[RMDB]
Structure probing data (2A3 and DMS) for a 177-nucleotide construct. The 2A3 profile rests on 1,642 reads. For DMS the reverse transcriptase was MarathonRT. Conditions: 150 mM KOAc, 10 mM MgCl2 and 150 mM bicine (pH 8.5), 24 C. The data come from the RNA Mapping Database (RMDB), library OK2TRN. Values cover nucleotides 27 to 126. 2A3 adducts were read by reverse transcription with SuperScript II with manganese.
RNA sequence: GGGAACGACUCGAGUAGAGUCGAAAAUACUUGAAUUUAUUAGGUUUCAAUGUUACUGCUGUCGAUCACAAUCAAGAAAGUAUUGAUUUCCUAAAUUAUAUGAUCGAGAAAGAAGGGGCAACUCAGAGCAAUUCAUAAAGUUCGCUUUAUGAAUUGCAAAAGAAACAACAACAACAAC
Reactivity to 2A3 in 0.01 (KOAc 150mM, MgCl2 10mM, bicine 150mM(pH8.5), 24C), signal-to-noise 1, nucleotides 027 to 126: u010a010c000u040u060g030a060a080u140u290u270a180u190u280a170g060g000u030u070u050c050a040a070u140g030u120u130a080c030u060g080c010u070g040u110c000g000a010u000c020a000c050a140a090u110c020a080a000g060a200a040a000g190u020a040u050u080g040a030u020u020u020c000c000u050a140a150a080u250u210a190u070a020u230g010a010u010c010g010a000g090a090a090a000g050a060a000g010g010g000g000c020a030a020c030u030c060a010g040a000
Reactivity to DMS in 0.01 (KOAc 150mM, MgCl2 10mM, bicine 150mM(pH8.5), 24C), signal-to-noise 3, nucleotides 027 to 126: u000a030c010u010u020g000a130a060u000u000u020a100u020u000a140g020g010u000u010u000c060a110a100u000g000u010u010a080c040u000g010c090u010g020u000c030g000a010u000c040a010c160a060a100u000c120a080a100g010a120a040a020g000u010a030u000u010g000a160u000u000u000c000c000u000a030a040a080u010u010a110u020a110u010g000a020u000c000g000a040g030a070a090a100g010a110a070g020g000g010g010c070a010a040c070u000c140a080g000a300